[RMDB]
RNA sequence: GGGAACGACUCGAGUAGAGUCGAAAAGAUAUGGACUCCAAGGGAGAACCUAAUCGUUAGGCAGGUAUAUCGGAAACGAUAUACCUGCCUAACGAUUGCGUUCGACGAUCUUGUGAGUCCUAAGUCACAACCAUGUUCUGUUCGCAGAACAUGGUUGAAAAGAAACAACAACAACAAC
Reactivity to DMS in 0.01 (KOAc 150mM, MgCl2 10mM, bicine 150mM(pH8.5), 24C), signal-to-noise 1, nucleotides 027 to 126: g010a060u000a300u000g030g020a010c010u000c000c000a010a020g000g020g010a030g000a020a010c000c000u000a010a010u000c010g020u000u000a000g010g010c000a000g000g030u010a010u000a010u020c010g010g010a210a050a230c010g010a000u000a000u010a000c000c010u000g000c000c000u000a020a000c000g000a010u000u000g010c300g000u000u000c000g010a070c260g000a020u000c010u000u010g010u020g000a020g020u000c000c000u000a000a120g000u000c060a170

Source: RMDB library TTRINS, as collected in RNAgym. Structure probing data (DMS) for a 177-nucleotide construct. High DMS reactivity at an A or C suggests that its Watson-Crick edge is free. For DMS, 1,489 sequencing reads were counted.